[RMDB]
RNA sequence: GGGAACGACUCGAGUAGAGUCGAAAAUUAAUCCGGCUUUAAGUUGACGAGGGCAGGGUUUAUCGAGACAUCGGCGGGUGCCCUGCGGUCUUCCUGCGACCGUUAGAGGACUGGUAAACCUAUUUAAUCAUCUUUCCAAUUUCGAUUGGAAAGAUGAAAAAGAAACAACAACAACAAC
Reactivity to 2A3 in 0.01 (KOAc 150mM, MgCl2 10mM, bicine 150mM(pH8.5), 24C), signal-to-noise 1, nucleotides 027 to 126: u060u010a050a080u030c010c010g010g030c070u070u080u170a080a020g030u050u100g080a010c010g020a110g000g000g000c010a000g040g050g000u020u050u030a110u080c120g030a050g020a070c010a050u060c020g080g000c000g000g060g000u020g010c010c000c000u000g030c010g030g000u010c030u070u050c010c000u040g040c030g060a030c000c000g020u000u030a030g050a110g050g040a060c070u090g000g090u040a010a040a040c010c000u030a150u140u080u050a090a070
Reactivity to DMS in 0.01 (KOAc 150mM, MgCl2 10mM, bicine 150mM(pH8.5), 24C), signal-to-noise 3, nucleotides 027 to 126: u000u020a090a070u020c040c020g020g020c040u000u000u000a040a110g010u010u000g010a090c090g010a080g000g000g030c040a070g000g000g010u000u000u000a030u000c030g010a130g000a090c090a050u000c060g010g020c050g000g010g010u010g010c020c010c000u000g000c030g010g000u000c010u000u010c070c050u000g010c130g000a020c020c010g010u000u010a050g010a120g020g000a080c070u010g000g010u000a030a060a060c030c010u000a100u010u000u000a060a140